[RMDB]
Source information
The record gives the reactivity of an RNA of 177 nucleotides to DMS and 2A3. For DMS, 2,517 sequencing reads were counted.
RNA sequence: GGGAACGACUCGAGUAGAGUCGAAAAGGCGUCCUGCUGGCCUGCGCCGUCAUCCACGCCCGAGUGGGAACUCCGAAAUUGGGAGACACGCCCUAGCCGAGACCGGCGAGCGUGCAUCCAGGGCGAGACCGCGUUAGAUAUUCGUAUCUAACGCGGUAAAAGAAACAACAACAACAAC
Reactivity to DMS in 0.01 (KOAc 150mM, MgCl2 10mM, bicine 150mM(pH8.5), 24C), signal-to-noise 3, nucleotides 027 to 126: g000g010c080g010u000c050c050u000g040c020u010g030g030c210c030u020g010c040g020c050c020g010u020c110a110u000c020c040a150c040g040c040c050c020g000a110g010u010g000g020g000a110a170c030u000c010c030g000a070a080a160u000u000g030g020g010a030g000a250c010a030c000g010c000c010c000u000a160g060c000c000g000a190g020a120c250c030g020g000c010g000a060g000c010g030u000g000c140a050u000c020c020a120g010g000g010c010g000a070g000
Reactivity to 2A3 in 0.01 (KOAc 150mM, MgCl2 10mM, bicine 150mM(pH8.5), 24C), signal-to-noise 2, nucleotides 027 to 126: g040g010c010g030u040c060c020u080g060c000u040g090g030c000c030u010g010c000g010c010c000g020u040c020a080u020c030c020a040c030g020c010c030c000g030a050g030u110g040g040g040a050a020c010u010c030c010g130a080a170a260u210u150g110g010g010a030g000a010c000a000c000g000c020c010c000u110a050g000c020c010g090a080g130a200c110c010g010g010c010g000a010g010c000g000u020g000c010a050u000c030c030a020g000g000g000c000g000a000g050

Record summary:
The RNA was probed in 150 mM KOAc, 10 mM MgCl2 and 150 mM bicine (pH 8.5) at 24 C. It was measured as part of the RMDB library OK2TRN. DMS adducts were read by reverse transcription with MarathonRT. For 2A3 the reverse transcriptase was SuperScript II with manganese.